[RMDB]
RNA sequence: GGGAACGACUCGAGUAGAGUCGAAAACCAGGGAUUUUCGACCUCAAGUUUCUUGAUCUUCUUCUUUGUCUUCCGGAGCUCCGCCUCGAGUUCCUCCGCUUUCUUUCUUCCACUCACCCACUUCUCGACUUGAAGAUUAGUUCGCUAAUCUUCAAGUAAAAGAAACAACAACAACAAC
Reactivity to DMS in 0.01 (KOAc 150mM, MgCl2 10mM, bicine 150mM(pH8.5), 24C), signal-to-noise 3, nucleotides 027 to 126: c020c020a110g010g000g000a130u000u000u010u000c040g000a090c040c040u000c090a090a120g010u010u000u000c010u000u000g010a060u000c040u010u010c040u000u000c020u000u010u000g010u000c030u000u000c050c010g010g010a130g000c060u000c030c060g020c040c030u000c060g010a070g020u000u000c010c020u000c060c040g010c060u000u000u010c020u000u000u000c040u000u000c000c040a060c050u010c060a120c020c010c020a080c160u000u000c020u010c090g010

An RNA of 177 nucleotides, treated with DMS and read out base by base. Values cover nucleotides 27 to 126. DMS adducts were read by reverse transcription with MarathonRT.